[RMDB]
RNA sequence: GGGAACGACUCGAGUAGAGUCGAAAAUUGAACGGAUUCGUCCGUUCAACGCGUGCGAUCCAAACGUAGUACAAAAGUACAGACGAAAGCAGAAGGAUCAAAUGAUACAGCCGUUCGCGGCUGUAAAGCUAAUAUCUCCAUUCGUGGAGAUAUUAGCAAAAGAAACAACAACAACAAC
Reactivity to 2A3 in 0.01 (KOAc 150mM, MgCl2 10mM, bicine 150mM(pH8.5), 24C), signal-to-noise 6, nucleotides 027 to 126: u020u010g000a000a000c000g010g010a010u030u050c170g060u000c020c000g000u000u000c000a000a000c040g040c020g060u100g040c050g010a010u000c010c000a040a050a010c020g030u030a010g010u010a040c020a030a300a050a060g010u000a010c020a060g150a060c040g100a140a070a040g070c080a070g060a190a070g070g000a000u010c000a010a020a070u100g020a010u020a030c000a000g000c010c010g010u030u080c230g010c020g090g010c010u000g000u010a000a020a010
Reactivity to DMS in 0.01 (KOAc 150mM, MgCl2 10mM, bicine 150mM(pH8.5), 24C), signal-to-noise 7, nucleotides 027 to 126: u010u010g000a010a000c010g010g000a050u000u000c230g020u000c000c000g020u000u000c000a010a010c160g020c120g000u000g010c190g010a010u010c000c000a070a110a120c020g010u000a080g010u010a010c010a090a080a070a170g010u000a010c000a080g010a060c040g000a070a090a090g010c120a080g010a100a100g010g010a010u000c010a070a110a090u010g000a230u000a010c000a000g010c010c000g010u000u010c180g020c010g010g010c000u000g000u000a000a040a130